RNA sequence: GGGAACGACUCGAGUAGAGUCGAAAACCUGAUUCGUCAGGAGGGUCACCUUUGUGAGCGACAUGCGUUAUUUCGGAGGCUCUACCCAUUGGGUAGAGCUCCCCACCCGGGAUAACGCAACAGCGCUCACUCUGGUAAACGGUAGCUUCGGCUACAAGCUUUGUUAAUUUUUCGAAAUUAACAAAGCAAAAGAAACAACAACAACAAC
Reactivity to DMS in 0.01 (KOAc 150mM, MgCl2 10mM, bicine 150mM(pH8.5), 24C), signal-to-noise 3, nucleotides 027 to 156: c010c000u000g020a090u010u010c190g030u010c030a040g020g000a130g020g000g020u000c050a040c000c000u000u000u010g010u000g020a020g020c000g010a070c050a300u010g020c030g010u000u000a020u000u010u000c000g010g000a300g000g000c010u000c000u010a010c000c000c020a300u000u000g040g020g030u000a020g000a010g010c000u000c050c010c000c040a300c300c000c020g000g020g010a010u000a010a020c010g000c020a020a000c050a150g000c020g000c010u000c010a000c000u000c000u020g010g060u000a050a060a070c080g000g000u000a040g010c010u000u010c270g060g000c000u010a010c010a050a240
Reactivity to 2A3 in 0.01 (KOAc 150mM, MgCl2 10mM, bicine 150mM(pH8.5), 24C), signal-to-noise 7, nucleotides 027 to 156: c000c000u010g030a060u060u130c170g090u060c150a060g040g070a080g060g090g050u120c060a020c010c000u010u010u020g000u000g000a010g000c000g170a220c040a120u050g000c000g000u010u000a000u000u010u010c000g000g000a000g000g010c010u000c010u000a000c000c010c110a270u190u300g000g000g000u000a000g000a000g010c010u040c010c010c000c000a030c010c000c000g000g000g010a000u000a000a000c010g000c000a000a000c010a000g000c000g000c000u000c000a000c000u000c000u000g000g000u010a100a100a040c100g060g000u010a000g000c010u050u040c260g110g000c010u020a000c010a040a010
Chemical mapping of a 207-nucleotide RNA with DMS and 2A3.
The RNA was probed in 150 mM KOAc, 10 mM MgCl2 and 150 mM bicine (pH 8.5) at 24 C.
Reactivities are rounded to 0.1 and cut off at 0 and 3.
DMS adducts were read by reverse transcription with MarathonRT.